Description: Chemical mapping of a 177-nucleotide RNA with 2A3 and DMS. For DMS the reverse transcriptase was MarathonRT. The RNA was probed in 150 mM KOAc, 10 mM MgCl2 and 150 mM bicine (pH 8.5) at 24 C.
[RMDB]
RNA sequence: GGGAACGACUCGAGUAGAGUCGAAAAGAUAUGGAGGAAGACCCGAGAAACGAGGUAGGUCGGAAACGACCUACUACCCACCGGAACCUCGCUUCCUCCUAAGUCAAAACCUCCGUUCGCGGAGGAAGGUGAAGAAAAGGUUCGCCUUUUCUUCACCAAAAGAAACAACAACAACAAC
Reactivity to 2A3 in 0.01 (KOAc 150mM, MgCl2 10mM, bicine 150mM(pH8.5), 24C), signal-to-noise 2, nucleotides 027 to 126: g000a000u030a000u050g000g010a010g020g030a030a010g050a110c060c220c180g010a010g020a050a270a040c130g000a020g030g000u000a000g000g020u000c010g010g000a010a020a010c000g000a000c000c000u000a000c010u010a010c010c000c000a080c050c020g050g060a070a100c010c000u010c000g010c000u000u010c000c010u000c010c000u010a010a000g010u000c020a010a040a090a270c000c010u000c010c000g040u060u080c280g020c030g130g000a010g000g020a020a070
Reactivity to DMS in 0.01 (KOAc 150mM, MgCl2 10mM, bicine 150mM(pH8.5), 24C), signal-to-noise 2, nucleotides 027 to 126: g000a070u000a210u000g000g010a040g020g030a030a020g020a240c220c270c120g010a060g000a090a060a130c040g020a120g000g010u000a000g000g010u000c000g000g010a010a020a110c000g000a000c000c000u000a000c010u000a030c070c070c050a250c140c090g000g010a160a120c150c010u000c020g000c010u000u010c000c000u010c000c000u000a010a060g000u010c040a050a050a070a070c000c000u000c000c000g010u000u000c160g010c020g000g000a010g010g000a000a010